[RMDB]
RNA sequence: GGGAACGACUCGAGUAGAGUCGAAAAAUCAGCCUUCGUUCUGUAAACGGGGUUGGAUCCGACUAUCAUAGGCUCUCCAACCCAACUCCUACUCAAUACGUCCUCGUCGUACAGAACGGUAACAUGUAAAACGAAGGCUGCUUCGGCAGCCUUCGAACUGGUAAAUUUAGUUCGCUAAAUUUACCAGAAAAGAAACAACAACAACAAC
Reactivity to 2A3 in 0.01 (KOAc 150mM, MgCl2 10mM, bicine 150mM(pH8.5), 24C), signal-to-noise 4, nucleotides 027 to 156: a000u090c030a010g070c010c020u060u070c010g010u000u000c010u010g030u010a000a050a090c050g010g000g000g000u000u000g000g010a060u270c010c010g060a050c080u200a150u300c090a200u130a150g000g000c010u000c000u000c030c000a030a010c000c000c000a000a010c010u000c000c010u060a100c020u030c080a060a160u090a140c040g100u090c030c030u070c060g080u030c030g000u010a010c000a010g000a020a010c010g000g010u060a070a030c050a060u110g080u230a050a060a000a020c000g010a000a010g010g000c000u000g000c000u020u010c030g090g000c000a000g010c000c000u000u000c000g000a000a010
Reactivity to DMS in 0.01 (KOAc 150mM, MgCl2 10mM, bicine 150mM(pH8.5), 24C), signal-to-noise 2, nucleotides 027 to 156: a100u010c050a080g000c020c020u000u010c020g020u000u000c020u000g020u000a090a070a060c080g020g020g020g030u000u000g010g000a030u000c020c010g020a080c030u010a110u010c190a250u000a110g000g010c050u020c120u000c010c020a070a050c020c010c000a060a020c040u000c030c030u010a080c070u000c040a120a150u000a120c110g010u010c040c000u000c020g000u010c100g000u000a080c020a020g000a010a040c030g010g050u020a040a050c070a060u000g050u000a090a090a070a160c010g010a020a000g030g030c020u010g000c020u000u000c300g050g020c010a030g040c010c020u000u000c020g010a000a050

This 207-nucleotide RNA was probed chemically with 2A3 and DMS. The reactions ran in a buffer of 150 mM KOAc, 10 mM MgCl2 and 150 mM bicine (pH 8.5), at 24 C.